[RMDB]
RNA sequence: GGGAACGACUCGAGUAGAGUCGAAAAUUGAUGCUCUAGCAAUCAAGUUUUCACAAUAUGAUCCAGAGACAAACGACGAUGGCUCUAUGAAACUUGAUGACGUACCAGAAGUCGGUGAGGGUUCAAACUAUGAUCGCAUCGGGCUUACUGAGGCUCAUACUCUUGUGAUAUUCGUAUCACAAGAGUAAAAAGAAACAACAACAACAAC
Reactivity to 2A3 in 0.01 (KOAc 150mM, MgCl2 10mM, bicine 150mM(pH8.5), 24C), signal-to-noise 4, nucleotides 027 to 156: u050u090g030a030u080g030c010u010c060u160a050g040c060a020a050u010c000a000a000g000u000u000u040u090c090a110c060a090a120u130a100u300g040a030u010c010c010a010g010a000g060a100c110a130a250a020c130g180a030c020g060a060u020g010g000c010u000c010u020a030u060g030a010a010a010c010u000u010g000a000u010g020a020c040g040u050a090c010c010a020g010a070a010g030u030c040g010g020u020g000a060g070g130g000u040u080c050a070a090a070c040u070a080u210g020a030u040c030g000c020a010u020c030g030g000g000c030u060u150a160c020u090g030a040g020g030c000u020c050a000
Reactivity to DMS in 0.01 (KOAc 150mM, MgCl2 10mM, bicine 150mM(pH8.5), 24C), signal-to-noise 2, nucleotides 027 to 156: u020u000g030a040u000g000c040u000c120u010a070g040c080a120a100u010c000a020a050g010u000u000u000u000c000a070c050a100a190u000a270u000g000a080u000c040c060a080g030a250g030a120c060a080a140a210c130g020a110c070g020a190u000g020g000c020u000c030u010a100u020g010a040a010a020c020u000u000g000a000u000g010a130c060g030u000a110c020c020a040g000a040a040g030u000c040g020g030u000g000a090g010g010g060u000u000c100a050a050a120c160u000a080u000g030a040u010c040g030c040a080u000c030g040g040g000c020u000u000a040c050u000g010a080g010g010c040u000c020a300
Background:
This 207-nucleotide RNA was probed chemically with 2A3 and DMS. For DMS the reverse transcriptase was MarathonRT. The reactions ran in a buffer of 150 mM KOAc, 10 mM MgCl2 and 150 mM bicine (pH 8.5), at 24 C.